[RMDB]
RNA sequence: GGGAACGACUCGAGUAGAGUCGAAAAUCCGGACGUCUCCUAUUCUCGGGAACCUCUGGAGGUGACGUCAUCGUCUAUGAUCUUCACGAGUAUAGUGAGGAGCUUCAGCCGGCUCACGUGCAAAACACCUAGUAUUUAUGUUCGCAUAAAUACUAGGAAAAGAAACAACAACAACAAC
Reactivity to DMS in 0.01 (KOAc 150mM, MgCl2 10mM, bicine 150mM(pH8.5), 24C), signal-to-noise 9, nucleotides 027 to 126: u000c010c010g010g010a050c090g010u010c040u000c010c000u000a100u000u000c050u010c050g010g010g000a060a060c060c040u010c020u000g000g010a070g000g010u000g010a100c120g010u000c070a060u010c060g010u010c040u000a060u010g010a070u000c030u000u000c010a020c010g010a180g010u010a070u010a090g010u000g010a030g000g000a040g000c040u000u000c110a090g010c060c040g000g010c050u000c050a060c070g020u000g010c120a070a070a090a110c250a150
Reactivity to 2A3 in 0.01 (KOAc 150mM, MgCl2 10mM, bicine 150mM(pH8.5), 24C), signal-to-noise 9, nucleotides 027 to 126: u020c000c000g000g030a010c020g010u000c020u020c060c010u050a110u250u070c080u050c030g060g010g060a130a120c020c020u070c030u040g060g010a020g000g030u020g010a050c050g060u160c040a050u100c020g130u000c020u040a110u160g040a060u030c010u020u020c020a010c030g050a050g120u160a070u080a170g060u110g020a010g010g010a010g010c000u090u060c050a030g020c020c010g030g000c020u020c010a040c030g040u070g040c030a030a030a060a040c040a040